The record gives the reactivity of an RNA of 207 nucleotides to DMS.
RNA sequence: GGGAACGACUCGAGUAGAGUCGAAAAAGAUACCCAUUCGUGGGUAUCUAAAAAAACCUUUGUGUCACGAAGUGGAGCCUCAAGGACCCAUUGGGUCCGUAGGGCUAUGAAGUGGAGUGACACUCUGGUAAAAAACUUGCGAAUUCGUUCGCAAGAACUAUAUUCUCUAAUUCGUUAGAGAAUAUAGAAAAGAAACAACAACAACAAC
Reactivity to DMS in 0.01 (KOAc 150mM, MgCl2 10mM, bicine 150mM(pH8.5), 24C), signal-to-noise 2, nucleotides 027 to 156: a080g020a030u010a010c010c020c000a040u000u010c260g030u000g000g000g000u010a000u010c010u000a000a010a040a050a070a030a030c000c010u000u000u010g030u010g030u000c000a030c020g000a300a300g010u000g020g000a040g030c000c000u000c040a190a120g030g010a010c000c000c010a260u000u000g050g090g030u000c000c000g000u000a060g000g000g020c020u010a040u020g000a110a270g010u000g000g010a300g010u010g010a020c000a010c000u000c020u010g040g000u000a000a090a070a120a050a090c010u000u000g000c000g020a050a070u000u000c260g040u000u000c000g000c000a020a000g000a010a120

It was measured as part of the RMDB library RNAMAK.